[RMDB]
RNA sequence: GGGAACGACUCGAGUAGAGUCGAAAAUUCAGCAAGUCCGACAAACUAAGUGCUAAUCAAAUUGCUCUAGAUUCGUGUUUGGAAUGCACUAGACCAGAUGGUUUGUUGAAAGGGGCCAAACCGAAAAGGUUAGAUCAUCGUUCGCGAUGAUCUAACCAAAAGAAACAACAACAACAAC
Reactivity to 2A3 in 0.01 (KOAc 150mM, MgCl2 10mM, bicine 150mM(pH8.5), 24C), signal-to-noise 3, nucleotides 027 to 126: u050u010c000a000g000c020a040a030g070u130c010c030g040a100c080a030a070a010c020u030a170a200g000u000g000c000u080a060a030u110c030a100a000a040u140u210g040c010u050c070u180a280g050a300u130u290c040g010u040g000u090u000u030g000g010a110a030u130g030c000a000c020u000a050g040a250c000c010a040g040a140u160g060g000u030u020u000g000u000u010g010a020a030a040g030g000g050g070c050c030a070a020a070c000c020g040a120a090a010a010
Reactivity to DMS in 0.01 (KOAc 150mM, MgCl2 10mM, bicine 150mM(pH8.5), 24C), signal-to-noise 1, nucleotides 027 to 126: u000u010c110a030g000c020a000a040g010u020c000c000g000a110c300a020a020a060c040u000a040a020g000u000g000c000u010a080a080u000c200a010a040a020u000u020g010c050u000c160u000a130g000a090u040u050c150g000u020g000u020u010u010g030g000a070a150u040g000c000a040c110u040a020g000a040c110c090a020g020a220u030g010g040u010u000u000g000u030u020g000a020a020a070g110g020g000g110c010c040a060a010a110c000c030g010a050a040a030a100
Chemical mapping of a 177-nucleotide RNA with 2A3 and DMS. The data come from the RNA Mapping Database (RMDB), library OK1LIB. Conditions: 150 mM KOAc, 10 mM MgCl2 and 150 mM bicine (pH 8.5), 24 C. For DMS the reverse transcriptase was MarathonRT.